[RMDB]
Structure probing data (2A3 and DMS) for a 177-nucleotide construct.
It was measured as part of the RMDB library OK2TST.
Values cover nucleotides 27 to 126.
The RNA was probed in 150 mM KOAc, 10 mM MgCl2 and 150 mM bicine (pH 8.5) at 24 C.
RNA sequence: GGGAACGACUCGAGUAGAGUCGAAAAAUGCGGAUCUCCCAUGAAUCGCACCAGCGAGCAGCGCACAAGGAUAUCGUGAUGCUCAGUGAUGUCCGAUCUUUCAUGACCAUGUUCACGUCACCGGAUCCCUACCCCUCCCAUUCGUGGGAGGGGUAGGAAAAGAAACAACAACAACAAC
Reactivity to 2A3 in 0.01 (KOAc 150mM, MgCl2 10mM, bicine 150mM(pH8.5), 24C), signal-to-noise 2, nucleotides 027 to 126: a000u110g020c030g020g000a020u010c000u000c030c000c000a020u040g090a000a060u050c060g030c010a050c020c030a040g060c020g030a020g080c040a030g020c030g030c050a050c040a100a090g090g040a080u070a030u100c040g030u050g040a060u120g040c010u020c050a040g030u020g080a050u060g000u000c040c030g010a030u000c040u070u100u080c040a010u070g010a030c030c010a080u060g010u080u100c040a030c090g030u050c030a000c050c000g030g050a080u050c010
Reactivity to DMS in 0.01 (KOAc 150mM, MgCl2 10mM, bicine 150mM(pH8.5), 24C), signal-to-noise 2, nucleotides 027 to 126: a060u000g020c080g000g010a160u000c140u000c010c020c020a170u010g020a070a040u000c030g020c070a000c100c080a110g010c090g030a060g010c070a040g000c080g000c040a120c090a120a070g000g010a030u000a040u010c050g010u000g000a070u010g000c100u030c100a080g030u000g000a040u000g010u010c010c050g000a060u020c030u010u000u010c040a140u000g010a100c060c040a010u000g000u000u000c040a060c120g010u000c060a070c010c010g000g000a150u000c070